[RMDB]
RNA sequence: GGGAACGACUCGAGUAGAGUCGAAAAAGUGGACGAUACAUUACACCGAGCAAUUAAAUUACGGUCCACGCUCGGCCAUUAUUCUGGCGAGAGCCAGUUCACAGACAGCUAGCGAAAGGAAGGACCUAGCAGGAAGGAAGGAGCUAGCGCUAGGACAACGUCCUACUCAUUUCGAUGAGUAGGACGUAAAAGAAACAACAACAACAAC
Reactivity to 2A3 in 0.01 (KOAc 150mM, MgCl2 10mM, bicine 150mM(pH8.5), 24C), signal-to-noise 4, nucleotides 027 to 156: a000g030u020g000g040a030c050g040a050u150a140c070a170u140u220a040c070a010c020c000g000a000g000c020a060a150u120u140a160a050a130u220u120a170c080g040g000u000c000c000a000c000g000c000u000c000g000g000c010c000a140u280u250a070u140u040c010u010g010g000c000g030a050g000a000g030c010c000a000g030u100u130c130a090c000a080g110a060c040a050g020c000u040a000g010c020g110a140a020a010g100g060a060a030g050g010a010c000c000u010a000g000c010a020g070g060a060a030g050g000a040a010g050g030a040g040c010u020a010g050c000g000c020u010a040g000g020a010c010a090
Reactivity to DMS in 0.01 (KOAc 150mM, MgCl2 10mM, bicine 150mM(pH8.5), 24C), signal-to-noise 1, nucleotides 027 to 156: a220g030u020g020g000a070c010g020a070u040a080c120a130u000u020a120c100a220c090c010g000a160g040c080a070a200u000u010a090a070a140u000u020a060c080g080g050u000c000c050a070c040g020c030u000c010g070g000c000c030a030u000u000a170u000u000c000u020g030g040c010g000a270g000a250g000c010c010a040g000u030u000c070a160c040a130g000a110c080a050g000c040u000a040g010c040g020a120a030a070g000g010a070a020g000g030a080c070c000u000a120g030c030a040g020g000a060a020g000g000a130a130g010g000a040g010c050u000a020g000c000g020c020u000a040g000g010a130c000a080
Record summary:
Chemical mapping of a 207-nucleotide RNA with 2A3 and DMS. Conditions: 150 mM KOAc, 10 mM MgCl2 and 150 mM bicine (pH 8.5), 24 C. For 2A3 the reverse transcriptase was SuperScript II with manganese. The 2A3 profile rests on 1,725 reads. For DMS the reverse transcriptase was MarathonRT. Reactivities are given for positions 27 through 156.